Conditions: 150 mM KOAc, 10 mM MgCl2 and 150 mM bicine (pH 8.5), 24 C. Structure probing data (2A3 and DMS) for a 207-nucleotide construct. For 2A3 the reverse transcriptase was SuperScript II with manganese. It was measured as part of the RMDB library OK3TST.
[RMDB]
RNA sequence: GGGAACGACUCGAGUAGAGUCGAAAAGGAUCGCUGGGACGAGGGCUGGACAGAAAGCGUCAAACGCCAGGUAGUGAAGGAUGCUUUUUAUAUUCAUCAGCAUAAAGGAACUACCAGUGCCGUGCGGCGGGUGGUGGAACCGUUCGGAUUCCUGAUCCCUCACAUAGUUCUUCGGAACUAUGUGAGGAAAAGAAACAACAACAACAAC
Reactivity to 2A3 in 0.01 (KOAc 150mM, MgCl2 10mM, bicine 150mM(pH8.5), 24C), signal-to-noise 2, nucleotides 027 to 156: g020g010a030u040c020g000c090u030g000g020g000a020c000g010a040g030g020g000c050u020g010g000a020c060a050g090a080a130a000g060c030g020u080c070a100a060a000c040g000c060c020a050g000g000u030a020g020u040g070a070a020g120g010a000u010g000c000u050u100u030u070u060a260u110a130u120u230c100a100u010c050a020g050c010a020u040a050a160a020g050g010a040a000c010u020a030c010c000a050g050u050g050c020c020g010u070g040c050g030g010c020g000g020g010u060g040g000u040g000g010a050a060c030c000g000u030u070c020g030g030a060u060u000c000c000u020g040a050u030c010
Reactivity to DMS in 0.01 (KOAc 150mM, MgCl2 10mM, bicine 150mM(pH8.5), 24C), signal-to-noise 1, nucleotides 027 to 156: g020g020a080u010c100g010c020u000g060g030g020a020c080g010a210g020g000g060c010u010g000g000a100c010a130g020a060a050a050g000c000g000u000c070a020a080a160c060g000c020c010a160g000g010u000a010g050u020g000a160a300g000g000a040u010g000c020u000u000u000u000u000a020u000a200u030u000c070a100u000c080a070g040c040a090u000a070a060a120g020g000a170a030c030u000a030c000c020a090g000u000g020c030c060g030u000g010c110g020g030c000g040g040g040u020g020g030u010g000g000a090a160c000c000g040u000u010c030g000g000a260u010u000c010c020u000g000a190u000c000